[RMDB]
RNA sequence: GGGAACGACUCGAGUAGAGUCGAAAAUCGGCGGCCUGGUGACCCUGGGCUACUUCUUCGGCAACGUGCCGUUCAUCAAGAAGAACCUGUCGCUGCUGGUGAUCGGCAUCAUCCUGCUGUCGCUGCAGAGGUAAAUUUAGUUCGCUAAAUUUACCUCAAAAGAAACAACAACAACAAC
Reactivity to DMS in 0.01 (KOAc 150mM, MgCl2 10mM, bicine 150mM(pH8.5), 24C), signal-to-noise 6, nucleotides 027 to 126: u010c090g020g010c020g000g000c010c030u010g000g020u010g010a120c260c110c020u000g010g020g010c030u000a050c080u000u000c050u000u000c040g010g010c040a120a110c170g010u010g010c010c000g010u000u000c020a030u000c060a060a120g010a090a040g000a070a090c090c080u000g010u000c120g010c030u000g020c080u000g000g000u000g000a020u000c020g000g000c010a040u000c100a080u000c070c040u000g000c030u000g000u000c050g010c070u010g000c170a160
Reactivity to 2A3 in 0.01 (KOAc 150mM, MgCl2 10mM, bicine 150mM(pH8.5), 24C), signal-to-noise 5, nucleotides 027 to 126: u070c000g030g010c020g000g000c000c000u030g030g050u100g040a070c000c030c000u010g020g020g020c000u020a050c020u050u030c010u040u050c020g020g000c020a090a060c100g050u050g010c010c000g020u000u030c020a050u020c040a060a040g070a050a010g010a060a120c010c080u120g100u170c070g030c080u050g010c020u020g000g010u010g010a030u040c020g010g000c010a030u040c010a030u040c020c020u030g020c020u020g050u040c010g000c070u070g000c020a040
About this RNA
Chemical mapping of a 177-nucleotide RNA with DMS and 2A3. The 2A3 profile rests on 12,721 reads. Reactivities are given for positions 27 through 126. 2A3 is a SHAPE reagent: it acylates the 2'-hydroxyl of flexible nucleotides of all four kinds. DMS adducts were read by reverse transcription with MarathonRT.